Notes:
This 177-nucleotide RNA was probed chemically with 2A3 and DMS. Source: RMDB library M2PK50, as collected in RNAgym. For 2A3 the reverse transcriptase was SuperScript II with manganese.

[RMDB]
RNA sequence: GGGAACGACUCGAGUAGAGUCGAAAAUACGUACCGUUCGCGGUACGUAACUAACCGAGAACCUUGCUCGGUAUAACAAGGAAACCCUUGGAAACAAGGGAACAAGAUUACCCUUCGGGGUAAUCAACACAAGAUAUAGGUUCGCCUAUAUCUUGUGAAAAGAAACAACAACAACAAC
Reactivity to 2A3 in 0.01 (KOAc 150mM, MgCl2 10mM, bicine 150mM(pH8.5), 24C), signal-to-noise 6, nucleotides 027 to 126: u040a000c000g000u000a010c000c000g000u020u040c290g000c000g090g000u010a000c000g000u000a000a010c000u030a020a020c000c000g000a000g000a020a070c010c010u010u010g010c000u000c010g000g030u030a020u030a030a010c000a000a010g040g000a100a050a040c000c000c000u000u010g020g030a040a030a020c000a010a010g000g000g020a000a000c010a020a050g010a000u000u010a000c000c000c000u010u060c200g040g000g000g000u000a000a000u000c000a010a010
Reactivity to DMS in 0.01 (KOAc 150mM, MgCl2 10mM, bicine 150mM(pH8.5), 24C), signal-to-noise 8, nucleotides 027 to 126: u000a010c000g010u000a000c000c000g030u000u010c210g030c010g020g010u000a000c000g010u000a000a130c050u010a120a300c010c000g010a000g010a130a130c010c000u000u000g010c000u000c010g010g010u000a010u010a070a150c020a010a010g000g000a180a130a150c010c000c000u000u000g000g000a130a110a190c000a000a000g000g000g000a070a040c190a110a110g000a020u000u000a000c000c000c000u000u010c170g020g000g010g000u000a000a000u000c000a080a190